Notes:
Structure probing data (2A3 and DMS) for a 207-nucleotide construct. The data come from the RNA Mapping Database (RMDB), library RSTRND. The DMS profile rests on 2,404 reads. For DMS the reverse transcriptase was MarathonRT.
RNA sequence: GGGAACGACUCGAGUAGAGUCGAAAAAAAACCCUGUAGUGUCACUCUACAUCUGCUAGUGCUGUUCCGGGUUACUUGGUUCAGUGCGAAAUAAUAGGUAACUCGCCAAAGUCCAGCCUGUCCGUCGGCGUGGCAGAGGUUAAAUCCAAAUGACACGGGAUAAUACGUUGUUCGCAACGUAUUAUCCAAAAGAAACAACAACAACAAC
Reactivity to 2A3 in 0.01 (KOAc 150mM, MgCl2 10mM, bicine 150mM(pH8.5), 24C), signal-to-noise 4, nucleotides 027 to 156: a010a000a010a040c050c000c000u050g030u060a070g000u000g030u050c010a020c070u110c060u130a020c020a080u030c000u020g010c020u030a100g080u030g090c010u020g030u120u040c040c010g010g010g000u060u060a050c010u070u060g030g000u110u090c070a040g010u040g120c010g040a060a060a030u250a030a060u050a080g120g040u050a060a050c000u010c040g010c020c020a060a050a010g020u020c030c010a010g020c010c030u060g010u070c040c040g040u040c010g020g000c000g000u020g000g000c010a000g000a020g020g000u010u070a010a090a070u030c060c040a050a020a050u050g010a010c010a010c050g010
Reactivity to DMS in 0.01 (KOAc 150mM, MgCl2 10mM, bicine 150mM(pH8.5), 24C), signal-to-noise 1, nucleotides 027 to 156: a100a150a030a000c000c010c000u000g030u000a050g050u000g000u020c050a090c040u020c060u030a140c010a070u010c010u000g010c010u010a110g030u000g040c000u000g000u010u000c040c000g040g010g000u000u000a010c010u000u010g050g010u010u000c050a050g040u010g010c040g020a090a060a100u010a100a120u010a080g020g000u010a060a050c040u020c000g010c040c020a050a080a080g040u010c080c040a070g030c040c020u000g000u010c050c050g010u010c050g020g010c010g060u000g010g000c000a050g010a080g000g010u000u000a040a130a160u010c090c070a070a090a080u000g000a030c010a040c040g040